[RMDB]
RNA sequence: GGGAACGACUCGAGUAGAGUCGAAAACCACUAGUUCGCUAGUGGAAAAAAACCUUUGUGUCGAGUAGCGUUGAACUACGAGCGAAAGUCCCAUUGGGACUUAAGCUCGCAACGCACACUCGACACUCUGGUAAAAAGAUAAUCUUCGGAUUAUCAACUACACCACAGGGUUCGCCCUGUGGUGUAGAAAAGAAACAACAACAACAAC
Reactivity to 2A3 in 0.01 (KOAc 150mM, MgCl2 10mM, bicine 150mM(pH8.5), 24C), signal-to-noise 2, nucleotides 027 to 156: c010c000a010c000u000a000g060u090u050c280g020c150u010a020g030u000g050g000a100a100a000a000a000a000a080c000c000u010u000u010g000u000g000u000c000g010a010g000u020a050g010c000g020u000u000g110a180a120c130u120a080c300g000a010g000c010g040a110a030a000g000u000c000c040c030a300u140u300g010g000g000a010c000u020u000a020a000g000c000u000c000g030c000a000a020c000g000c010a000c000a000c010u000c000g000a010c000a000c000u000c000u000g000g020u070a040a090a000a000a000g010a000u020a000a000u010c020u060u130c300g080g000a000u010u000a000u010c000a030a000